[RMDB]
RNA sequence: GGGAACGACUCGAGUAGAGUCGAAAAUGUCAUUCCGGAGAGGGGCGUUUUCUUCUUUCUCUAACCCUAAUGUAUUGCUUGGGCAGCAGCUCUCUCGGUAUGCUCGCUGUUUUGCUGGCUAACUUUCAGCGAGCAGAGGGCGAAGUCGAAUUUCGGACUACAUCAAAGUCUUCGGACUUUGAUGUAGAAAAGAAACAACAACAACAAC
Reactivity to 2A3 in 0.01 (KOAc 150mM, MgCl2 10mM, bicine 150mM(pH8.5), 24C), signal-to-noise 1, nucleotides 027 to 156: u030g000u040c000a040u110u110c090c030g040g080a150g010a020g000g010g000g010c020g010u020u120u110u080c070u050u010c000u010u190u000c030u010c060u120a000a240c010c000c000u040a110a150u150g130u170a140u160u180g010c010u000u010g030g060g000c030a040g010c010a010g000c010u000c000u010c000u010c070g040g050u110a100u130g000c010u000c000g040c010u010g120u080u100u120u090g040c040u030g040g000c050u060a100a010c010u060u120u070c010a000g010c000g000a000g030c030a000g010a000g040g000g000c030g060a040a010g030u030c030g090a180a140u040u040u040c060g000g040a030

Structure probing data (2A3) for a 207-nucleotide construct.
Values are in units of 0.01, from 0 to 300, in steps of 10.
Reactivities are given for positions 27 through 156.